[RMDB]
RNA sequence: GGGAACGACUCGAGUAGAGUCGAAAAUGAUGAGCUAUACUCAUUGUGCCUGAUACUGUACUAAUCGCAAGAUUGGUGGACAAAAGAGGGAAUAGAUAAUCCUCUCAAAGUGGUAUCGCAAAGCCUGCGGCAUAGAUGUUUUCGAACAUCUAUGCCGAAAAGAAACAACAACAACAAC
Reactivity to DMS in 0.01 (KOAc 150mM, MgCl2 10mM, bicine 150mM(pH8.5), 24C), signal-to-noise 4, nucleotides 027 to 126: u010g010a000u000g010a040g010c150u050a100u030a300c000u000c000a000u000u000g000u010g000c060c040u000g020a000u010a010c010u000g010u040a020c000u000a000a000u000c000g010c300a100a150g010a010u000u000g010g000u000g000g020a080c190a030a110a120a030g010a010g010g000g010a060a090u010a150g010a130u060a100a100u010c000c010u010c020u000c070a070a050a110g020u010g000g000u000a000u000c000g030c110a060a080a120g010c050c050u000g000
Reactivity to 2A3 in 0.01 (KOAc 150mM, MgCl2 10mM, bicine 150mM(pH8.5), 24C), signal-to-noise 5, nucleotides 027 to 126: u100g020a010u000g010a000g030c120u160a050u090a290c000u020c010a010u010u030g030u040g030c000c030u000g000a000u000a030c010u030g050u070a000c000u020a000a000u010c010g040c070a060a070g000a020u010u000g000g000u040g030g050a050c060a050a110a030a000g010a000g000g050g000a060a080u030a090g160a050u120a150a070u100c010c010u040c000u010c050a060a070a030g110u120g090g000u020a010u030c020g010c080a050a060a050g050c010c030u080g030